[RMDB]
RNA sequence: GGGAACGACUCGAGUAGAGUCGAAAACUCGUCGACUAUCGGGGUUCCCACCUCGGAUAGUAUCGGCGUCGAAAUGUGGGAUGCUAAGUUAGUUUACCGGCUAGCUUUCAAGAUUUAAGGUAAAAACUAUUGAGAAUUUGUUUCUGGUGACUCUCUCGGUUAAUAAAGGGUUCGCCCUUUAUUAACCAAAAGAAACAACAACAACAAC
Reactivity to 2A3 in 0.01 (KOAc 150mM, MgCl2 10mM, bicine 150mM(pH8.5), 24C), signal-to-noise 1, nucleotides 027 to 156: c020u020c010g000u000c000g000a030c000u000a000u000c000g060g010g010g000u050u050c000c000c000a000c000c000u000c010g020g000a000u010a010g030u050a180u030c010g010g000c050g030u210c140g140a040a010a070u300g010u020g010g050g000a030u030g000c020u040a030a000g010u020u010a000g000u050u050u090a030c010c000g000g000c010u000a000g000c020u010u000u040c050a040a000g030a090u160u230u160a300a300g000g000u060a080a070a010a040a040c100u170a120u240u240g020a020g060a130a100u120u130u040g020u000u000u000c010u000g050g100u080g140a190c010u090c010u030c030u060c230

Description: Source: RMDB library ARCHII, as collected in RNAgym. This 207-nucleotide RNA was probed chemically with 2A3. 2A3 adducts were read by reverse transcription with SuperScript II with manganese. The RNA was probed in 150 mM KOAc, 10 mM MgCl2 and 150 mM bicine (pH 8.5) at 24 C.